[RMDB]
RNA sequence: GGGAACGACUCGAGUAGAGUCGAAAAGAUAUGGAGAUACGACAUGCUUUAAGGGACGAAUUCGGAAACGAACUAUCCCGGAGAGCAACAGCGUAUCUCCUAAGUCAAAGUGGGCUUCGGCCCACAACCACUAGCGUAGGUUCGCCUACGCUAGUGGAAAAGAAACAACAACAACAAC
Reactivity to 2A3 in 0.01 (KOAc 150mM, MgCl2 10mM, bicine 150mM(pH8.5), 24C), signal-to-noise 2, nucleotides 027 to 126: g030a040u070a050u150g000g000a020g000a000u020a010c060g100a070c130a130u040g010c010u100u050u040a030a020g000g020g020a000c070g180a300a300u000u030c000g020g070a050a080a090c010g000a010a010c040u020a030u020c050c000c000g000g000a050g000a000g000c000a030a010c030a010g000c000g000u020a000u010c000u000c010c000u000a020a010g030u010c020a000a090a130g010u000g010g010g000c000u080u120c300g120g000c000c000c000a000c000a000a000
Reactivity to DMS in 0.01 (KOAc 150mM, MgCl2 10mM, bicine 150mM(pH8.5), 24C), signal-to-noise 3, nucleotides 027 to 126: g000a040u000a300u000g010g000a010g020a000u000a000c000g060a070c070a220u020g000c000u000u000u000a300a200g000g000g000a010c100g010a050a130u000u000c010g000g000a120a100a250c010g030a000a000c120u000a170u000c000c000c000g000g000a130g000a000g010c000a010a020c270a130g000c020g010u000a000u000c000u000c000c000u000a020a080g000u010c030a080a190a110g010u000g000g000g000c000u000u000c180g040g010c000c000c010a000c020a040a090
This 177-nucleotide RNA was probed chemically with 2A3 and DMS. It was measured as part of the RMDB library TTRDEL. For 2A3, 3,260 sequencing reads were counted. The DMS profile rests on 1,603 reads. DMS adducts were read by reverse transcription with MarathonRT. The reactions ran in a buffer of 150 mM KOAc, 10 mM MgCl2 and 150 mM bicine (pH 8.5), at 24 C.